The record gives the reactivity of an RNA of 207 nucleotides to 2A3 and DMS. It was measured as part of the RMDB library OK3TST. Conditions: 150 mM KOAc, 10 mM MgCl2 and 150 mM bicine (pH 8.5), 24 C.
RNA sequence: GGGAACGACUCGAGUAGAGUCGAAAAGCUAGUCGGAGACGACUAGCAUCGAUCAGUUCGCUGAUCGUAAGGAGCAGUCUUCCGCAGUCGACGCUCCGAUAGGCAUGGCGGACUGCGCUACUGUAAAAUCAGGAUAAUUAAUUAAUGAAGCCAUGCGGGAUUUAAUAGCGUUCGCGCUAUUAAAUCCAAAAGAAACAACAACAACAAC
Reactivity to 2A3 in 0.01 (KOAc 150mM, MgCl2 10mM, bicine 150mM(pH8.5), 24C), signal-to-noise 4, nucleotides 027 to 156: g000c000u000a000g000u000c000g030g010a040g000a140c010g000a000c000u010a010g000c000a010u030c000g000a000u010c000a010g030u040u100c140g050c090u010g000a000u000c000g000u020a120a180g010g000a000g000c070a060g050u000c010u100u060c060c010g000c020a000g010u010c020g000a010c000g000c000u000c000c010g010a140u150a050g090g000c000a000u000g010g000c000g000g030a000c000u030g010c020g030c030u180a120c010u010g040u070a030a080a120a180u150c010a000g030g030a050u050a080a060u300u100a060a070u130u050a020a070u100g090a040a020g010c010c000a000u000g000c030g020
Reactivity to DMS in 0.01 (KOAc 150mM, MgCl2 10mM, bicine 150mM(pH8.5), 24C), signal-to-noise 2, nucleotides 027 to 156: g000c000u000a000g030u000c000g030g010a300g020a300c010g020a010c020u000a020g030c030a020u010c030g000a010u000c010a000g010u030u010c300g060c020u000g000a000u010c010g050u000a110a090g000g000a070g030c040a150g010u000c020u000u020c070c050g030c000a070g050u000c050g010a050c040g000c020u000c000c000g000a030u000a080g010g030c030a030u010g000g010c050g010g010a090c020u000g010c020g000c040u000a110c030u000g000u000a050a060a120a170u020c000a060g010g010a300u020a090a030u010u010a160a110u000u010a040a230u020g020a120a240g000c000c010a010u000g000c010g000